About this RNA:
The record gives the reactivity of an RNA of 177 nucleotides to DMS. Source: RMDB library TTRINS, as collected in RNAgym. The reactions ran in a buffer of 150 mM KOAc, 10 mM MgCl2 and 150 mM bicine (pH 8.5), at 24 C.
RNA sequence: GGGAACGACUCGAGUAGAGUCGAAAAGAUAUGGAGGACCAUCGGCAUUGUUCGCCAGGGAGAUGGUGUUCGGAAACGAACACACAUCGAAGAACUGGUCGAACAAUGCCGAUGGUCCUCCUAAGUCCAGUAAGUUAAGGUUCGCCUUAACUUACUGAAAAGAAACAACAACAACAAC
Reactivity to DMS in 0.01 (KOAc 150mM, MgCl2 10mM, bicine 150mM(pH8.5), 24C), signal-to-noise 2, nucleotides 027 to 126: g010a120u010a300u000g010g010a030g010g000a030c000c000a000u000c000g000g000c000a030u010u000g000u000u000c000g010c010c000a000g010g000g020a110g020a010u010g000g010u000g010u000u010c000g020g000a100a100a270c020g010a030a020c000a000c000a080c010a020u000c000g020a140a170g010a160a150c000u000g000g000u020c090g050a020a000c000a000a010u000g010c010c000g010a000u000g010g020u000c000c000u000c010c010u000a000a060g010u010c050